[RMDB]
RNA sequence: GGGAACGACUCGAGUAGAGUCGAAAACGAAUUUAUCAGGGAAUUUCAAGUAUGUAUAUGAUGAGUUACUACGCCAAAAAGUAGAUUUUGAUUAUGAUAUUAAAACGGUAUUUAAGGCGAAUAUUACAUCAGACGAGGUAUUCGUACCUCGUCUGAUAAAAGAAACAACAACAACAAC
Reactivity to 2A3 in 0.01 (KOAc 150mM, MgCl2 10mM, bicine 150mM(pH8.5), 24C), signal-to-noise 3, nucleotides 027 to 126: c050g050a020a020u000u090u000a060u100c000a010g030g000g190a030a110u080u140u120c020a170a000g120u080a210u080g180u020a080u010a040u270g070a020u050g020a000g100u060u000a120c090u070a050c020g000c020c010a090a060a070a070a070g140u300a110g040a290u000u000u220u020g060a000u090u050a110u300g170a060u070a030u250u000a010a020a000a000c040g090g050u180a040u000u000u070a000a000g000g000c000g050a020a000u110a050u020u280a050c030
Reactivity to DMS in 0.01 (KOAc 150mM, MgCl2 10mM, bicine 150mM(pH8.5), 24C), signal-to-noise 2, nucleotides 027 to 126: c070g000a050a050u010u020u050a000u000c040a070g000g050g030a090a050u040u000u020c090a140a110g050u080a010u050g000u060a030u050a010u010g030a050u030g030a140g020u000u000a070c070u010a070c000g000c020c040a020a090a040a030a010g020u000a080g000a180u000u000u000u000g000a080u000u010a110u030g000a090u030a030u000u000a010a010a070a020c070g000g010u030a030u000u000u000a040a220g000g000c000g050a090a030u000a080u020u000a110c150
Notes
An RNA of 177 nucleotides, treated with 2A3 and DMS and read out base by base. The data come from the RNA Mapping Database (RMDB), library OK1LIB. The RNA was probed in 150 mM KOAc, 10 mM MgCl2 and 150 mM bicine (pH 8.5) at 24 C. High 2A3 reactivity points to a flexible backbone, as in loops and unpaired stretches.